RNA sequence: GGGAACGACUCGAGUAGAGUCGAAAAGAUAUGGAUUUUUCAGUCGGUCUGUGAUGAGCGAUAAGCUAUAAUCGGAAACGAUUAUUAGCUUUUGACGCUUGCAUGGCCGACUGAAAAAUCCUAAGUCGGAGGAUAAAUAGUUCGCUAUUUAUCCUCCAAAAGAAACAACAACAACAAC
Reactivity to DMS in 0.01 (KOAc 150mM, MgCl2 10mM, bicine 150mM(pH8.5), 24C), signal-to-noise 1, nucleotides 027 to 126: g000a110u000a300u010g000g000a000u010u000u000u000u000c000a020g000u000c000g010g000u000c000u010g040u000g010a170u000g010a000g030c000g030a160u020a030a010g000c000u000a030u000a000a010u010c000g010g000a170a140a240c000g000a010u000u000a030u010u020a010g010c000u000u000u010u010g040a260c050g010c010u000u000g000c000a040u010g010g000c000c000g020a000c000u000g000a000a010a040a010a000u000c000c010u000a010a090g010u000c130